[RMDB]
RNA sequence: GGGAACGACUCGAGUAGAGUCGAAAAGAUAUGGAUAAUCCAGCGAGAAUACGUGAUGGCUGAUGACCCACCCGUCGGAAACGACGGUGUGGCAAGGCCAUCAUUCUCGCUGGAUUAUCCUAAGUCACUGUACAAAGAUGUUCGCAUCUUUGUACAGAAAAGAAACAACAACAACAAC
Reactivity to DMS in 0.01 (KOAc 150mM, MgCl2 10mM, bicine 150mM(pH8.5), 24C), signal-to-noise 3, nucleotides 027 to 126: g000a050u000a300u010g000g010a000u000a000a000u000c000c000a010g020c010g020a010g010a050a120u000a110c300g020u000g010a010u000g000g020c010u030g010a090u020g000a180c300c010c010a010c000c010c010g000u000c000g010g000a130a100a230c000g020a030c000g000g020u020g030u000g000g000c030a040a060g010g030c000c000a000u000c000a000u000u000c000u000c000g010c000u000g000g000a000u000u000a000u000c000c000u010a000a090g020u010c030a270